The record gives the reactivity of an RNA of 177 nucleotides to 2A3 and DMS. For DMS the reverse transcriptase was MarathonRT. It was measured as part of the RMDB library TTRDES. Conditions: 150 mM KOAc, 10 mM MgCl2 and 150 mM bicine (pH 8.5), 24 C.
[RMDB]
RNA sequence: GGGAACGACUCGAGUAGAGUCGAAAAGAUAUGGAUCCGUCCAUAUCGCAACAGCUUACAUCGGAAACGAUGUAAGACAUGCGACAUGGCGGAUCCUAAGUCAAAGCAGUAGGUUCGCCUACUGCAACAACAUUGAGCUCUUCGGAGCUCAAUGUUGAAAAGAAACAACAACAACAAC
Reactivity to 2A3 in 0.01 (KOAc 150mM, MgCl2 10mM, bicine 150mM(pH8.5), 24C), signal-to-noise 2, nucleotides 027 to 126: g040a060u040a020u170g000g020a010u010c000c020g230u230c070c010a010u020a010u000c000g000c000a090a270c100a090g030c000u010u000a000c000a010u010c030g000g050a030a120a060c020g010a000u000g010u000a010a000g000a030c000a010u080g020c000g000a010c000a020u030g010g020c000g020g010a000u000c000c000u000a000a000g000u000c030a020a190a040g020c000a000g000u010a010g040g090u030u110c300g210c060c000u000a000c000u010g000c000a010a010
Reactivity to DMS in 0.01 (KOAc 150mM, MgCl2 10mM, bicine 150mM(pH8.5), 24C), signal-to-noise 2, nucleotides 027 to 126: g000a050u000a300u010g000g010a000u020c000c000g030u000c000c000a020u000a030u000c000g000c010a010a090c230a190g010c000u000u030a000c000a020u020c000g020g010a210a110a240c000g000a050u000g000u010a000a000g020a050c130a200u000g000c000g030a030c030a010u000g010g000c010g010g000a010u000c000c000u000a010a080g000u000c020a120a140a080g000c000a000g020u000a000g000g020u000u010c300g020c000c000u000a000c010u000g040c010a030a070